This 207-nucleotide RNA was probed chemically with DMS and 2A3. Source: RMDB library M2RFPK, as collected in RNAgym. DMS (dimethyl sulfate) methylates the pairing face of unpaired adenines and cytosines. For 2A3 the reverse transcriptase was SuperScript II with manganese. Values cover nucleotides 27 to 156.
RNA sequence: GGGAACGACUCGAGUAGAGUCGAAAAGUUCGCAUGGUGCACUAUUGUGUUAUUAGUAACUAAGUAAGCUUACAAUCGAAAAUGUUUAACCAUAAAAGGGUAGAAUGGUGUAAGACAGUCUGAUACUUUACGGCUUCACGUUUCGACGUGAAGCCAAUACAGUUUAAACCUUCGGGUUUAAACUGUAAAAAGAAACAACAACAACAAC
Reactivity to DMS in 0.01 (KOAc 150mM, MgCl2 10mM, bicine 150mM(pH8.5), 24C), signal-to-noise 1, nucleotides 027 to 156: g060u010u000c080g040c090a130u000g000g000u030g030c040a070c030u010a040u000u010g070u010g030u010u000a100u010u000a070g020u010a050a130c020u010a060a170g030u010a040a090g010c040u000u020a060c060a030a130u000c040g010a070a090a120a060u010g000u000u010u000a050a050c010c010a100u010a050a080a130a150g010g040g000u000a050g010a050a010u020g000g000u000g030u000a070a080g000a090c060a100g000u000c020u000g010a190u000a080c040u000u000u000a090c090g030g030c000u000u000c000a000c010g000u010u000u020c250g000a180c010g040u000g000a040a000g010c000c000a000a010
Reactivity to 2A3 in 0.01 (KOAc 150mM, MgCl2 10mM, bicine 150mM(pH8.5), 24C), signal-to-noise 1, nucleotides 027 to 156: g060u050u080c050g030c110a050u140g120g000u080g060c040a010c050u120a150u160u160g030u050g000u030u050a080u040u030a020g080u030a020a020c030u000a000a100g000u020a160a000g050c030u070u010a020c110a050a080u090c060g060a020a070a000a070u010g000u020u040u000a030a030c040c000a000u080a070a180a000a010g080g040g020u020a040g050a000a010u010g010g000u040g030u050a050a040g030a080c030a000g100u040c000u080g060a040u060a240c020u030u070u110a050c060g000g000c010u010u000c000a000c000g000u000u060u080c100g060a000c000g020u020g000a000a040g010c010c000a000a000